Record summary:
Chemical mapping of a 177-nucleotide RNA with 2A3 and DMS. Values cover nucleotides 27 to 126. The DMS profile rests on 1,528 reads. The 2A3 profile rests on 1,091 reads.
RNA sequence: GGGAACGACUCGAGUAGAGUCGAAAAGUGAUCCGCACUGUGCAGCGGUCCAUCCGCUCGACAAGAUGUCAGCAGGAGGACGAGUCCCAGGAUCAGGACCUUCAGUCGAUUGUGUCUCAUUUUGUGCAAUGCCCUCAUGGUUCGCCAUGAGGGCAUUAAAAGAAACAACAACAACAAC
Reactivity to 2A3 in 0.01 (KOAc 150mM, MgCl2 10mM, bicine 150mM(pH8.5), 24C), signal-to-noise 1, nucleotides 027 to 126: g050u010g050a030u010c010c040g090c050a080c090u070g000u070g040c050a050g060c050g040g040u020c000c000a300u070c010c000g010c030u070c140g010a000c040a150a090g110a300u210g010u020c000a000g000c010a020g030g020a010g000g010a000c030g000a000g060u000c030c020c000a000g000g000a010u020c050a020g000g030a020c020c000u040u010c050a090g030u120c090g100a110u040u170g030u020g020u080c000u000c080a070u140u070u020u100g030u000g040c040
Reactivity to DMS in 0.01 (KOAc 150mM, MgCl2 10mM, bicine 150mM(pH8.5), 24C), signal-to-noise 2, nucleotides 027 to 126: g010u000g000a050u010c050c050g040c060a110c110u010g020u000g030c130a070g020c090g000g010u000c060c040a060u020c010c010g010c020u000c160g020a030c000a150a150g010a220u000g010u000c010a090g020c010a000g060g000a170g010g000a020c030g000a140g000u000c010c030c010a200g000g000a020u000c060a080g000g010a060c000c000u010u000c060a080g000u010c070g000a120u010u000g010u000g000u000c000u000c070a190u000u000u000u000g020u000g020c150